[RMDB]
RNA sequence: GGGAACGACUCGAGUAGAGUCGAAAAGCUGGGGACGAAGCCGCCCCCGGGCGCUCCCCUCUGUCCACCUUCGAGGGGGUUCACACCCCCAACCGGCGGGCCGGCUGCUCUUCUUUCCCUUCUCUCGCUGAAUGGAUAAGUUCGCUUAUCCAUUCAGAAAAGAAACAACAACAACAAC
Reactivity to DMS in 0.01 (KOAc 150mM, MgCl2 10mM, bicine 150mM(pH8.5), 24C), signal-to-noise 1, nucleotides 027 to 126: g010c160u000g000g000g010g000a050c070g000a130a090g010c000c000g010c000c000c020c040c030g030g030g010c190g040c190u010c000c010c000c000u000c020u000g030u000c110c090a040c070c070u000u000c120g030a120g020g010g000g010g000u000u000c170a130c150a300c030c000c010c030c070a100a070c020c010g010g010c120g040g020g010c090c070g030g000c020u000g000c160u010c030u000u000c010u000u010u000c010c000c000u000u000c010u000c050u000c130g010